[RMDB]
RNA sequence: GGGAACGACUCGAGUAGAGUCGAAAAGCGCAUGUGGCGGGUGAGCUCGGCGACGUGAACUCCUGCACCGCCGUAGAUCUCAGGUGGGUAUUCUUUGGUCAUCAUCGCAACUCUCAUACUUCCGAGAAGUGUACACAAUGUUCGCAUUGUGUACACUAAAAGAAACAACAACAACAAC
Reactivity to 2A3 in 0.01 (KOAc 150mM, MgCl2 10mM, bicine 150mM(pH8.5), 24C), signal-to-noise 5, nucleotides 027 to 126: g010c050g000c040a050u090g050u080g110g020c040g040g030g020u050g020a020g000c000u000c030g000g010c020g030a110c050g050u020g020a060a040c040u050c040c020u060g000c030a030c020c010g020c010c020g000u040a030g020a160u050c030u010c050a040g020g080u070g070g000g010u030a110u120u050c090u060u070u080g060g000u050c020a040u030c010a010u050c050g000c030a010a090c020u010c000u020c040a050u070a250c040u070u020c020c000g020a020g020a130
Reactivity to DMS in 0.01 (KOAc 150mM, MgCl2 10mM, bicine 150mM(pH8.5), 24C), signal-to-noise 5, nucleotides 027 to 126: g020c080g020c140a070u000g010u010g010g040c090g010g000g010u010g000a070g020c030u000c020g010g000c040g010a080c190g020u000g000a100a080c100u010c060c070u000g010c030a070c020c020g020c020c010g020u010a030g000a080u000c040u010c030a100g010g020u000g000g000g010u000a040u000u000c070u010u000u000g020g010u000c040a070u000c030a050u000c050g000c080a070a100c070u000c020u000c030a100u000a070c130u000u000c030c050g000a120g010a090